The record gives the reactivity of an RNA of 177 nucleotides to 2A3 and DMS.
The RNA was probed in 150 mM KOAc, 10 mM MgCl2 and 150 mM bicine (pH 8.5) at 24 C.
For 2A3, 5,354 sequencing reads were counted.
[RMDB]
RNA sequence: GGGAACGACUCGAGUAGAGUCGAAAAGAUAUGGAGGGAGGAAGGAACUACUUUCCCUGGUCGGAAACGACCAGCGAAAGCCUUCUAGUCCCUCCUAAGUCAAAAGUUGGUUGUUCGCAACCAACAACCGAUUACUAUGGUUCGCCAUAGUAAUCGGAAAAGAAACAACAACAACAAC
Reactivity to 2A3 in 0.01 (KOAc 150mM, MgCl2 10mM, bicine 150mM(pH8.5), 24C), signal-to-noise 2, nucleotides 027 to 126: g020a020u070a040u240g010g010a010g000g020g000a010g020g010a020a020g040g000a040a050c100u230a040c000u300u020u020c020c060c000u000g000g010u000c000g010g060a070a050a090c020g000a000c010c010a010g000c000g000a000a000a000g040c000c010u000u000c010u020a020g040u020c000c000c010u000c000c000u000a000a010g010u000c030a040a030a020a140g010u010u000g010g010u000u030g010u070u080c300g030c120a010a000c050c010a000a000c000a000a020
Reactivity to DMS in 0.01 (KOAc 150mM, MgCl2 10mM, bicine 150mM(pH8.5), 24C), signal-to-noise 3, nucleotides 027 to 126: g020a060u020a300u010g010g020a030g010g010g070a100g000g010a010a000g010g010a080a010c110u010a300c000u000u000u020c000c110c000u000g000g030u000c000g000g010a120a110a280c000g010a000c000c000a010g040c300g040a010a000a010g000c000c010u000u010c010u000a180g020u000c000c000c000u000c000c000u000a000a050g020u010c040a110a080a140a120g000u000u000g000g000u000u000g010u000u000c280g050c010a020a020c000c000a010a000c000a070a150